[RMDB]
RNA sequence: GGGAACGACUCGAGUAGAGUCGAAAAUUACAAAACGGAGCUACAAAUCCAAAACCCAGCUAUCAGAUUUUAUGCGCGAAUUCACGCAGCUUCUGGAAGCCUGCGAAAUAAAACUGGUAGAUCCAGCGAUCACGCUCACUUUCGAGUGAGCGUGAUCAAAAGAAACAACAACAACAAC
Reactivity to 2A3 in 0.01 (KOAc 150mM, MgCl2 10mM, bicine 150mM(pH8.5), 24C), signal-to-noise 1, nucleotides 027 to 126: u160u180a000c020a000a150a000a040c070g020g000a000g040c070u210a150c100a090a150a070u000c050c000a000a120a040a000c000c010c000a000g000c000u000a000u000c000a060g110a300u000u000u120u000a040u110g050c050g040c070g290a090a050u110u300c020a020c100g030c000a020g000c010u020u000c080u300g120g110a070a020g020c020c040u060g000c000g010a000a230a000u020a000a060a000a000c000u010g040g000u010a000g000a130u110c050c010a090g060c080